[RMDB]
RNA sequence: GGGAACGACUCGAGUAGAGUCGAAAAACAGCUUGCUUUCCCCCACCUCAUGAGUAUCAGGGAACCCUUGGUUCCCAGGUCUUUUGGGGAAGACAGUUGGCACCCAGAGGUAGGGCGACCUUGUGAGCAAGCACUUCAGAUACAGGUGGCCCAUGGGACAUCAACCCAAUUUCGAUUGGGUUGAUGUAAAAGAAACAACAACAACAAC
Reactivity to 2A3 in 0.01 (KOAc 150mM, MgCl2 10mM, bicine 150mM(pH8.5), 24C), signal-to-noise 2, nucleotides 027 to 156: a010c020a010g020c000u020u010g000c030u040u040u040c000c010c000c000c030a050c000c000u010c000a040u030g010a000g000u190a020u050c060a040g010g000g020a000a000c000c000c060u170u300g000g000u000u000c000c040c000a000g020g010u010c000u000u040u030u020g030g000g000g040a020a010g060a000c080a040g050u020u000g030g110c050a030c120c020c000a010g020a020g100g090u230a130g020g000g020c030g000a010c020c030u110u150g040u020g060a030g020c030a050a020g020c010a020c020u170u220c100a060g030a130u140a140c050a000g040g000u060g110g000c010c010c020a010u010g010g010g000
Reactivity to DMS in 0.01 (KOAc 150mM, MgCl2 10mM, bicine 150mM(pH8.5), 24C), signal-to-noise 2, nucleotides 027 to 156: a070c030a070g000c030u000u000g010c000u000u000u000c020c000c000c050c040a300c030c010u020c040a050u000g010a060g010u000a030u010c010a150g030g000g020a030a020c000c030c190u000u010g060g030u000u010c010c020c000a000g010g020u000c020u000u000u000u020g030g000g000g020a090a060g010a090c030a120g010u000u000g020g000c020a120c020c000c020a190g000a110g000g010u000a060g010g010g020c040g000a090c010c000u000u010g020u000g020a070g050c010a050a050g030c020a060c060u000u010c090a130g010a240u000a070c060a040g000g020u000g000g010c000c000c000a080u010g000g010g000
Description
Chemical mapping of a 207-nucleotide RNA with 2A3 and DMS. The 2A3 profile rests on 1,480 reads. The DMS profile rests on 4,643 reads.